Background: Chemical mapping of a 207-nucleotide RNA with 2A3 and DMS. The RNA was probed in 150 mM KOAc, 10 mM MgCl2 and 150 mM bicine (pH 8.5) at 24 C. For DMS, 2,581 sequencing reads were counted. The 2A3 profile rests on 1,280 reads. 2A3 adducts were read by reverse transcription with SuperScript II with manganese. Source: RMDB library OK3TST, as collected in RNAgym.
[RMDB]
RNA sequence: GGGAACGACUCGAGUAGAGUCGAAAAUGAUCUAUGACUGCAUCAAGCUUUUCCCAAUCUUUUAUAGUGAAUUUCAUAAAGGAAGCUUCAUUUUUGGGAGAAGAGUCCAAUGGUGUUAUAAAGCCCUGUUCCCAAGAGGGCAGGAAAUCAGUCAGCAAUACCCUAUAAUGUUCGCAUUAUAGGGUAUAAAAGAAACAACAACAACAAC
Reactivity to 2A3 in 0.01 (KOAc 150mM, MgCl2 10mM, bicine 150mM(pH8.5), 24C), signal-to-noise 2, nucleotides 027 to 156: u140g020a030u080c050u160a060u080g000a000c010u000g010c010a020u010c040a010a070g010c000u010u000u010u000c000c010c010a020a010u060c050u130u250u080u100a160u090a040g010u030g070a130a060u110u060u080c040a080u180a190a100a040g090g010a070a020g070c060u080u040c020a020u050u060u020u100u070g010g000g000a040g000a030a000g000a010g050u040c020c040a030a060u030g000g000u010g010u030u160a090u060a170a050a010g020c000c000c000u020g040u130u110c000c000c000a000a020g130a080g000g000g070c020a000g020g050a050a060a030u060c010a000g020u000c000a000g030c000a010
Reactivity to DMS in 0.01 (KOAc 150mM, MgCl2 10mM, bicine 150mM(pH8.5), 24C), signal-to-noise 2, nucleotides 027 to 156: u000g020a080u000c050u010a110u000g030a040c060u010g030c080a140u010c030a110a260g010c000u000u020u000u000c020c010c000a060a150u010c090u020u000u000u000a140u010a110g010u000g000a070a080u000u000u000c010a110u000a150a110a260g000g000a050a090g020c090u000u000c030a080u020u010u010u020u000g030g010g000a100g010a050a030g020a130g000u010c040c060a060a160u000g000g040u000g010u000u000a070u030a060a070a170g010c070c000c010u020g000u000u020c000c010c000a100a190g020a080g000g030g030c000a050g000g000a030a040a140u010c010a120g010u000c030a060g000c060a120